[RMDB]
RNA sequence: GGGAACGACUCGAGUAGAGUCGAAAAUGAUCUAUGACUGCAUCAAGCUUUUCCCAAUCUUGUAUAGUGAAUUUCAUAUAGGAAGCUUCAUUUUUGGGAGAAGAGUCCAAUGAUGUUAUAAAGCCCUGUUCCUAAGAAGGCAGGAAAUCAGUCAGCACACUCAUGAGGGUUUCGACCCUCAUGAGUGAAAAGAAACAACAACAACAAC
Reactivity to 2A3 in 0.01 (KOAc 150mM, MgCl2 10mM, bicine 150mM(pH8.5), 24C), signal-to-noise 1, nucleotides 027 to 156: u040g010a000u070c030u170a080u090g020a010c000u010g030c000a000u000c020a020a020g060c030u060u020u000u000c020c060c000a020a000u020c010u020u050g030u120a170u010a200g060u050g210a270a100u140u220u060c080a070u150a060u200a280g070g020a060a030g020c100u000u020c010a010u000u000u000u000u040g010g000g000a000g100a030a000g000a020g110u080c070c050a020a060u030g000a000u000g040u100u070a090u090a230a110a100g010c030c000c000u000g050u220u190c040c000u060a100a130g140a030a020g120g020c000a000g000g000a000a090a000u020c000a000g020u000c000a000g050c040a020